[RMDB]
RNA sequence: GGGAACGACUCGAGUAGAGUCGAAAAAGAACCGCUCUGCGGAAAGGCCCCUCUUUCCCUCCACCCUGGGGCGCGACGCGGUGUGGCAUGGCCGGCAGCGCGAGCAACGUGCACGUAGCGCCAAGCGACCCUCAUUAAUAUUCGUAUUAAUGAGGGUAAAAGAAACAACAACAACAAC
Reactivity to 2A3 in 0.01 (KOAc 150mM, MgCl2 10mM, bicine 150mM(pH8.5), 24C), signal-to-noise 9, nucleotides 027 to 126: a000g090a040a020c010c010g010c020u120c080u210g030c030g030g060a100a070a040g110g010c000c000c010c000u030c030u020u050u030c010c000c000u040c040c020a070c040c010c030u080g010g000g030g000c030g010c020g020a030c020g010c020g010g050u040g010u020g040g020c080a100u100g090g000c010c000g040g030c040a060g020c020g010c010g020a040g020c040a060a130c070g060u090g020c030a010c110g030u040a030g020c000g000c030c010a040a020g030c020g040
Reactivity to DMS in 0.01 (KOAc 150mM, MgCl2 10mM, bicine 150mM(pH8.5), 24C), signal-to-noise 9, nucleotides 027 to 126: a070g000a110a110c030c000g000c010u020c070u030g010c040g020g000a050a080a130g010g010c020c000c020c030u020c080u010u000u000c010c000c000u010c060c050a120c050c030c030u010g000g000g000g020c040g000c050g000a140c080g000c040g000g010u010g010u010g000g020c050a090u010g010g010c030c030g000g010c060a070g000c030g010c030g010a140g010c100a080a080c100g010u020g000c030a140c060g010u010a080g010c050g000c020c020a070a120g000c090g010

Source: RMDB library OK1LIB, as collected in RNAgym. This 177-nucleotide RNA was probed chemically with 2A3 and DMS. The reactions ran in a buffer of 150 mM KOAc, 10 mM MgCl2 and 150 mM bicine (pH 8.5), at 24 C. For 2A3, 34,731 sequencing reads were counted. For DMS the reverse transcriptase was MarathonRT.